[RMDB]
RNA sequence: GGGAACGACUCGAGUAGAGUCGAAAAGAUUCUAUGUUCGCAUAGAAUCAAAGAACGCCGAAGCGCAGAGCGGAAGAUGGAGGAGACGGCGAACCACCAAAAAAACAGCGGUCUUCGGACCGCUGAACACAGAACUAGUGUUCGCACUAGUUCUGUGAAAAGAAACAACAACAACAAC
Reactivity to 2A3 in 0.01 (KOAc 150mM, MgCl2 10mM, bicine 150mM(pH8.5), 24C), signal-to-noise 1, nucleotides 027 to 126: g000a010u000u000c000u010a000u000g000u010u090c130g000c110a000u000a010g010a010a000u020c000a020a000a000g020a120a030c050g030c030c020g020a060a030g100c020g000c100a030g040a020g130c050g040g060a050a090g060a050u160g040g010a070g010g030a040g040a030c030g020g020c060g020a030a020c000c030a020c030c020a030a120a080a000a000a060a000c010a000g010c000g000g030u000c020u020u070c160g040g010a010c000c000g000c000u000g000a000a000
Reactivity to DMS in 0.01 (KOAc 150mM, MgCl2 10mM, bicine 150mM(pH8.5), 24C), signal-to-noise 1, nucleotides 027 to 126: g000a010u000u020c000u010a000u000g000u010u020c270g030c010a000u010a000g000a030a000u000c010a100a180a080g000a050a130c060g000c040c010g020a100a100g010c070g030c110a040g010a150g020c050g010g000a080a080g000a090u000g040g010a100g020g010a150g030a090c110g000g010c010g000a080a120c020c030a130c090c020a000a000a060a060a070a070a090c000a020g000c000g040g010u000c000u000u010c130g020g020a020c000c020g000c000u010g000a020a090